Structure probing data (DMS and 2A3) for a 207-nucleotide construct. Values cover nucleotides 27 to 156. The DMS profile rests on 14,131 reads. The data come from the RNA Mapping Database (RMDB), library OK3TST.
RNA sequence: GGGAACGACUCGAGUAGAGUCGAAAAGCACCCUCGACGACUGGCUGGAACUGACGGGCAGCUACACCGUGCCGUCCGGUGUGCAGUCGCUGCGCGUGCGCAUGACGGUCGGGGCUGACGCCACGGCCGGCGACGUGUAUUUCGCCGAGGUCGACGCUAACACAGAAGUUUUCGAACUUCUGUGUUAAAAAGAAACAACAACAACAAC
Reactivity to DMS in 0.01 (KOAc 150mM, MgCl2 10mM, bicine 150mM(pH8.5), 24C), signal-to-noise 4, nucleotides 027 to 156: g030c040a110c040c020c000u010c020g020a050c010g010a080c060u000g020g000c030u000g010g010a090a100c060u010g030a060c040g010g000g020c020a040g020c060u000a120c060a110c040c030g000u010g010c020c050g010u000c090c030g010g000u000g030u010g010c050a070g010u010c050g020c050u000g030c070g030c050g030u000g010c030g010c060a180u000g000a080c010g020g010u000c000g000g000g020g010c000u000g030a150c230g040c010c000a050c000g010g000c010c020g000g000c000g020a030c020g010u000g010u000a180u000u000u000c020g040c020c010g020a090g020g020u000c030g010a090c030g010c110
Reactivity to 2A3 in 0.01 (KOAc 150mM, MgCl2 10mM, bicine 150mM(pH8.5), 24C), signal-to-noise 7, nucleotides 027 to 156: g030c020a100c010c000c000u020c010g040a020c010g010a020c020u100g010g030c030u070g020g050a090a040c040u080g090a040c040g020g050g030c010a010g010c050u120a030c030a040c030c040g090u130g150c020c040g050u060c010c030g020g000u040g010u050g050c020a040g060u060c030g000c070u060g000c080g020c010g020u190g060c010g010c050a080u180g080a070c010g000g000u010c000g000g000g000g000c010u120g060a080c210g010c000c010a010c000g000g000c000c000g020g010c010g030a040c010g010u030g010u040a130u030u060u040c020g000c000c010g070a050g040g000u040c030g010a040c040g010c050